[RMDB]
RNA sequence: GGGAACGACUCGAGUAGAGUCGAAAAUAAUCUCCAAGCUAGAAUCAUUGCUGUUAUUGAAGGGAGAAGUUGAGUCAAUUAAGAAGCAGAUCAACAGGCAAAAUAUCAGCAUAUCCACCCUGGAAGGGAUCCACCAUACUUUCGAGUAUGGUGGAUCAAAAGAAACAACAACAACAAC
Reactivity to DMS in 0.01 (KOAc 150mM, MgCl2 10mM, bicine 150mM(pH8.5), 24C), signal-to-noise 4, nucleotides 027 to 126: u040a070a090u010c000u010c030c040a090a090g040c100u060a050g030a120a110u070c090a120u000u030g010c020u000g020u000u000a020u010u000g000a070a080g020g010g010a070g020a070a120g020u000u000g020a110g000u010c060a080a090u020u080a100a160g030a140a060g050c110a070g000a170u000c020a050a040c050a060g000g010c060a030a060a010a020u010a010u020c030a000g040c020a040u010a050u020c040c060a070c030c000c020u000g000g010a080a090g020g000
Reactivity to 2A3 in 0.01 (KOAc 150mM, MgCl2 10mM, bicine 150mM(pH8.5), 24C), signal-to-noise 5, nucleotides 027 to 126: u060a010a090u010c020u010c020c010a000a000g090c020u160a050g110a100a080u150c030a130u080u150g000c000u010g020u100u040a050u040u120g090a150a110g090g080g000a070g010a090a050g020u040u030g030a030g080u080c010a040a090u060u130a170a100g100a160a020g170c060a030g010a040u010c000a030a010c010a000g120g020c020a010a160a030a000u080a020u040c020a000g000c000a030u020a070u120c030c020a020c070c000c000u000g010g040a050a040g050g030